Conditions: 150 mM KOAc, 10 mM MgCl2 and 150 mM bicine (pH 8.5), 24 C.
Structure probing data (2A3) for a 207-nucleotide construct.

RNA sequence: GGGAACGACUCGAGUAGAGUCGAAAAGUGGGUUGAUGUGUGGGCGGACUUGAUGCUUGGAGCUGGAUGGAUGGACAGAGAGGAGUUGACGUUUAGGGAGGCUAACUGGGCAAUUGUACGUUUUGUACUCUUUUCUCAGUUAUAACGCUACAUGCUGUAGCCUCAUCAGUUUCGACUGAUGAGGCUAAAAAGAAACAACAACAACAAC
Reactivity to 2A3 in 0.01 (KOAc 150mM, MgCl2 10mM, bicine 150mM(pH8.5), 24C), signal-to-noise 1, nucleotides 027 to 156: g060u110g000g140g000u010u030g040a020u130g000u010g020u030g000g030g070c000g000g000a000c100u080u140g120a120u120g020c010u100u070g000g000a020g000c000u010g010g010a150u060g000g000a050u050g010g000a050c040a110g050a000g000a010g210g000a000g030u020u090g090a010c030g000u000u040u040a000g000g010g000a010g000g030c030u000a000a000c000u000g000g000g000c000a030a030u000u000g000u050a010c020g080u130u140u230u300g040u000a000c010u020c020u080u230u060u000c050u000c000a000g000u010u100a060u000a250a000c150g000c040u040a040c090a080u210g150c150u120g040
Reactivities are rounded to 0.1 and cut off at 0 and 3.
It was measured as part of the RMDB library OK3TST.